[RMDB]
RNA sequence: GGGAACGACUCGAGUAGAGUCGAAAAGAUAUGGAGUAAGAACUACAGUAAGAGAGCUGACGAAGUCGGAAACGAUCGAAGCUCUGUUACUGCUUACUCCUAAGUCAAAGCGCAGUUCGCUGCGCAACAUCGAUGUAGUCUUCGGACUACAUCGAUGAAAAGAAACAACAACAACAAC
Reactivity to 2A3 in 0.01 (KOAc 150mM, MgCl2 10mM, bicine 150mM(pH8.5), 24C), signal-to-noise 3, nucleotides 027 to 126: g070a010u090a080u170g000g000a020g030u030a000a000g030a080a030c190u280a070c300a010g010u010a020a020g040a000g020a010g120c010u050g180a270c080g100a240a060g220u040c030g060g000a130a070a040c000g000a030u060c030g050a040a010g010c000u000c000u020g030u020u000a000c010u000g040c000u000u000a010c000u000c010c000u010a060a010g000u000c040a120a060a040g000c000g030c000a010g020u070u140c190g080c150u000g000c000g000c000a000a010
Reactivity to DMS in 0.01 (KOAc 150mM, MgCl2 10mM, bicine 150mM(pH8.5), 24C), signal-to-noise 2, nucleotides 027 to 126: g000a020u000a300u000g010g000a000g000u010a000a000g020a160a040c140u030a300c000a020g000u000a020a010g000a040g010a050g020c000u000g000a240c210g000a050a260g000u000c000g040g020a070a090a220c040g000a040u000c020g010a300a000g010c000u010c000u000g020u000u000a020c000u000g010c000u000u000a010c000u000c000c000u010a010a050g010u000c060a060a070a130g000c010g010c030a010g000u000u020c270g010c000u010g030c000g020c020a060a060